The record gives the reactivity of an RNA of 177 nucleotides to DMS.
[RMDB]
RNA sequence: GGGAACGACUCGAGUAGAGUCGAAAAUACACUGAGUGGCCAGAUGAUGAUGAUCUCUGAACGCAUAAUAAUCAGGCCACUCAGUGUAUAUCCAAAAGGGAGGACGUUUGUUCGCAAACGUCCUCCCGUCUUCUACACGGUUCGCCGUGUAGAAGACAAAAGAAACAACAACAACAAC
Reactivity to DMS in 0.01 (KOAc 150mM, MgCl2 10mM, bicine 150mM(pH8.5), 24C), signal-to-noise 2, nucleotides 027 to 126: u010a000c000a000c000u000g010a020g010u010g000g010c000c000a040g010a010u000g000a110u020g000a050u000g000a100u010c120u030c250u020g030a100a110c290g000c010a020u000a010a040u010a210a000u000c000a050g030g010c000c000a010c000u000c000a000g000u010g000u000a000u000a040u000c000c020a040a090a060a170g000g020g000a010g000g010a000c000g010u000u000u010g000u000u030c240g010c010a010a010a010c000g000u000c000c010u000c000c000c000

In probing experiments dimethyl sulfate is read out at A N1 and C N3, which are open when not base-paired. The reactions ran in a buffer of 150 mM KOAc, 10 mM MgCl2 and 150 mM bicine (pH 8.5), at 24 C.